[RMDB]
RNA sequence: GGGAACGACUCGAGUAGAGUCGAAAACACCAGCUCCGGGUGUCGUACCGGGGAGGGGAUGCCGGGAUAGUACUUCACCGGUCUCAGACACACGUAGAGAUCGAGCAUCUGCCUGAGCGUCACGUUGAUUAAUCAGUCUAUUCGUAGACUGAUUAAUAAAAGAAACAACAACAACAAC
Reactivity to DMS in 0.01 (KOAc 150mM, MgCl2 10mM, bicine 150mM(pH8.5), 24C), signal-to-noise 9, nucleotides 027 to 126: c080a300c020c020a110g010c010u000c010c010g010g010g010u010g020u010c120g020u000a080c010c010g000g000g000g010a050g010g010g010g010a050u000g010c020c020g000g000g000a090u010a050g010u010a070c100u000u010c100a160c130c020g000g000u000c040u000c020a100g020a100c100a100c210a080c230g010u000a130g010a040g010a030u000c020g000a090g010c080a060u000c020u000g010c010c010u000g010a080g020c030g010u000c030a080c100g020u010u010g010
Reactivity to 2A3 in 0.01 (KOAc 150mM, MgCl2 10mM, bicine 150mM(pH8.5), 24C), signal-to-noise 9, nucleotides 027 to 126: c030a030c000c010a030g030c010u010c010c010g020g030g020u180g140u150c080g050u080a040c000c000g000g010g000g010a040g020g020g020g000a020u030g010c000c010g010g010g010a060u080a110g080u080a080c050u100u110c060a050c110c000g000g020u000c010u000c000a070g060a020c030a010c020a010c260g030u060a040g010a000g000a040u020c010g010a020g040c030a050u030c010u030g010c000c000u040g020a060g030c010g010u020c010a010c080g100u090u170g090